[RMDB]
The record gives the reactivity of an RNA of 177 nucleotides to 2A3 and DMS.
Values cover nucleotides 27 to 126.
RNA sequence: GGGAACGACUCGAGUAGAGUCGAAAACUGCUUGAGCAGCUCAUGGCAUACCCUUCAUUGUGGGCGCCAGUUCUGGCAUUCCUCCUGCACCGGCAUGGCAGCCAGGUGGAUCAGCAGUGCCUUGAAACCGGAGAAUCCAUUUCGAUGGAUUCUCCGGAAAAGAAACAACAACAACAAC
Reactivity to 2A3 in 0.01 (KOAc 150mM, MgCl2 10mM, bicine 150mM(pH8.5), 24C), signal-to-noise 1, nucleotides 027 to 126: c000u020g050c000u150u190g000a070g010c060a000g030c000u030c030a290u030g000g020c010a040u190a300c010c010c000u000u060c260a280u260u280g060u230g020g010g030c020g000c000c000a010g000u000u050c010u010g010g090c010a070u030u100c000c000u010c000c010u020g000c000a010c020c040g300g000c200a170u160g110g070c080a060g140c120c000a020g050g010u000g000g030a020u030c010a010g020c000a010g000u010g080c020c000u000u040g090a000a070a070
Reactivity to DMS in 0.01 (KOAc 150mM, MgCl2 10mM, bicine 150mM(pH8.5), 24C), signal-to-noise 1, nucleotides 027 to 126: c040u000g000c020u000u000g000a070g020c050a020g000c050u000c040a150u020g020g000c000a130u000a090c000c020c020u000u000c300a160u010u000g050u020g020g010g010c160g010c000c020a020g010u000u000c010u000g000g020c180a160u010u000c050c000u000c030c040u000g030c020a170c020c020g060g120c110a050u010g000g040c150a170g010c050c030a040g050g010u000g020g000a040u010c100a050g000c040a030g010u000g000c000c030u000u010g010a040a110a090

Overview
The data come from the RNA Mapping Database (RMDB), library OK2TST. 2A3 adducts were read by reverse transcription with SuperScript II with manganese.